[RMDB]
An RNA of 307 nucleotides, treated with 2A3 and read out base by base.

RNA sequence: GGGAACGACUCGAGUAGAGUCGAAAAGGAGUCUCGGUGACGAGACUCCAACCGCUUAUCUACGGAUAAGCGGAAGAUAAUCGCUACGGCGAUUAUCAAGACACAGACUACGGUCUGUGUCACGAAGAACUUCGGUUCUUCGAGGAAGCGCGUGAGCGCUUCCAACCAUGGAGCUUCGGCUCCAUGGAGGAACCGCGAAAGCGGUUCCACGACGAUACUUAUUUCCUUUGAUCGUCGUUAUUACUGGCUUCGGCCACAAAGGAGAUAAGAUGUCAUUCGUGACAUCUAAAAGAAACAACAACAACAAC
Reactivity to 2A3 in 0.01 (KOAc 150mM, MgCl2 10mM, bicine 150mM(pH8.5), 24C), signal-to-noise 4, nucleotides 027 to 266: g000g000a000g000u000c000u000c000g010g040u100g050a040c010g010a000g000a000c000u010c000c010a000a000c000c000g010c000u000u010a000u000c000u010a020c300g090g000a000u000a000a000g000c000g000g000a000a000g000a000u010a000a000u000c000g000c010u040a040c260g150g000c000g000a000u000u010a000u010c000a010a040g000a000c000a000c000a010g000a010c010u030a040c300g120g000u010c000u000g010u010g000u000c000a010c010g000a000a000g000a010a000c020u060u110c250g070g010u010u000c000u010u010c010g000a060g020g010a000a000g000c010g000c040g060u150g070a090g010c010g000c000u000u000c010c000a000a010c000c000a000u000g000g000a000g010c040u070u090c250g140g000c000u060c000c000a000u000g000g010a010g010g000a000a000c000c000g010c010g150a160a060a030g010c030g040g000u000u000c000c010a000c000g000a000c000g010a010u050a180c030u050u070a060u130u130u020c010c000u020u010u020g010a000u030c000g010u000c010g010u030u030a070u060u120a090c080u010g000g010c010u030u050c220g120g000c020c000a010c010a020a020a000g030g020a020g010a020u070a110
The RNA was probed in 150 mM KOAc, 10 mM MgCl2 and 150 mM bicine (pH 8.5) at 24 C.